[RMDB]
RNA sequence: GGGAACGACUCGAGUAGAGUCGAAAAAACUCAGCUAGGGAGAGUAUAACACUCAUGUUGACGAGACCUAGACGAAACACAGAGGAAAAUUAUUAAUCACUGGAUAGUAUUAGUAAUGACUCUGUGUAAAACUCUUCUACGUUCGCGUAGAAGAGAACGCAUUACUUAUCUUCGGAUAAGUAAUGCGAAAAGAAACAACAACAACAAC
Reactivity to 2A3 in 0.01 (KOAc 150mM, MgCl2 10mM, bicine 150mM(pH8.5), 24C), signal-to-noise 3, nucleotides 027 to 156: a000a010c000u000c010a010g030c010u010a000g030g020g000a040g010a010g040u130a120u060a300a020c070a010c030u050c040a080u160g040u030u060g050a050c050g020a000g010a050c010c000u000a000g000a040c060g010a010a070a000c000a000c000a000g000a000g000g040a060a130a120a000u010u010a000u000u010a000a000u020c040a010c030u060g080g080a140u300a300g000u010a000u010u000a000g000u000a000a010u010g020a020c000u000c000u000g000u000g000u000a000a000a000a000c000u000c000u000u000c000u000a010c000g030u030u060c270g000c000g080u000a000g000a000a000g010a000g000a020a000
Reactivity to DMS in 0.01 (KOAc 150mM, MgCl2 10mM, bicine 150mM(pH8.5), 24C), signal-to-noise 2, nucleotides 027 to 156: a030a070c050u000c000a100g020c050u010a000g010g010g010a170g030a150g010u000a100u010a120a080c130a020c030u000c050a110u010g000u000u000g020a180c060g020a200g010a080c010c010u000a090g010a260c100g000a160a060a050c010a020c000a000g030a040g020g000a110a110a060a020u010u000a010u010u000a000a000u000c090a080c060u010g000g030a210u000a080g020u000a040u000u000a010g000u000a010a010u000g020a200c000u000c000u020g000u030g010u000a000a060a040a090c000u000c000u000u000c000u000a010c010g010u010u000c300g010c030g020u000a010g000a010a020g000a010g010a010a060